An RNA of 177 nucleotides, treated with 2A3 and DMS and read out base by base. Source: RMDB library TTRDES, as collected in RNAgym. 2A3 adducts were read by reverse transcription with SuperScript II with manganese. The DMS profile rests on 16,580 reads.
RNA sequence: GGGAACGACUCGAGUAGAGUCGAAAAGAUAUGGAAAUAUCAUAUCGUGACGAUGAAAUUAGUCGGAAACGACUAAUGGAGUCACAUAUGAGUAUUUCCUAAGUCAAAACGUAUACUUCGGUAUACGCUUACAUUAAAAGUUCGCUUUUAAUGUAAGAAAAGAAACAACAACAACAAC
Reactivity to 2A3 in 0.01 (KOAc 150mM, MgCl2 10mM, bicine 150mM(pH8.5), 24C), signal-to-noise 7, nucleotides 027 to 126: g030a010u100a050u170g000g010a020a000a000u020a010u020c000a000u010a010u050c240g000u000g000a010c010g300a300u070g010a010a050a000u010u010a000g010u000c000g000g010a110a100a030c020g010a000c000u010a000a010u010g000g000a010g000u000c000a000c000a000u020a000u010g050a060g230u060a020u000u010u000c000c000u020a160a010g080u030c050a020a040a060a110c020g000u000a000u000a010c020u050u100c300g130g000u020a000u000a000c000g000
Reactivity to DMS in 0.01 (KOAc 150mM, MgCl2 10mM, bicine 150mM(pH8.5), 24C), signal-to-noise 9, nucleotides 027 to 126: g010a050u010a300u000g000g000a000a010a010u000a020u000c000a010u000a010u000c280g020u000g010a010c000g010a140u010g000a120a100a010u000u000a000g020u000c000g000g000a130a150a220c000g020a010c000u000a000a000u000g000g000a050g010u000c000a000c010a010u000a000u000g000a040g020u000a000u000u000u000c000c000u000a050a120g010u000c050a090a060a090a300c010g010u000a000u000a010c000u010u010c230g030g010u000a000u000a000c000g000